[RMDB]
RNA sequence: GGGAACGACUCGAGUAGAGUCGAAAAGAGAGUCACGACUUGCACGGGAUUUCUUUUUGGCGUACUGUCCACGGAAAGUUUCGUGUGGUUGGAAGGGUGAGUAAACCGUGUCGUGGCGGUUUUGCUCCGUAAUUAGUGGUUUCGACCACUAAUUACGAAAAGAAACAACAACAACAAC
Reactivity to 2A3 in 0.01 (KOAc 150mM, MgCl2 10mM, bicine 150mM(pH8.5), 24C), signal-to-noise 5, nucleotides 027 to 126: g060a000g010a000g040u040c000a000c030g000a000c020u060u140g000c010a010c010g010g000g010a020u000u080u000c000u090u190u040u090u120g020g000c030g030u140a200c150u220g080u090c020c010a010c010g000g020a040a050a110g050u010u010u040c010g010u020g000u020g030g060u100u110g050g050a090a070g070g020g020u090g010a030g000u030a010a030a020c010c010g010u010g010u040c040g010u020g040g010c000g000g010u020u040u050u080g010c000u000c010
Reactivity to DMS in 0.01 (KOAc 150mM, MgCl2 10mM, bicine 150mM(pH8.5), 24C), signal-to-noise 9, nucleotides 027 to 126: g010a100g010a130g010u000c020a070c010g010a030c020u010u010g020c020a010c010g010g000g000a020u000u000u000c030u000u000u000u000u000g010g000c020g010u010a120c270u010g010u010c010c030a060c300g010g000a020a020a030g000u000u000u000c010g020u000g010u000g010g010u010u000g000g000a110a120g010g000g010u010g010a030g000u000a020a020a040c010c000g000u000g010u000c080g010u000g000g000c010g000g000u000u000u000u000g010c020u000c010
Description:
The record gives the reactivity of an RNA of 177 nucleotides to 2A3 and DMS. Values cover nucleotides 27 to 126. DMS adducts were read by reverse transcription with MarathonRT. Conditions: 150 mM KOAc, 10 mM MgCl2 and 150 mM bicine (pH 8.5), 24 C. The DMS profile rests on 31,161 reads.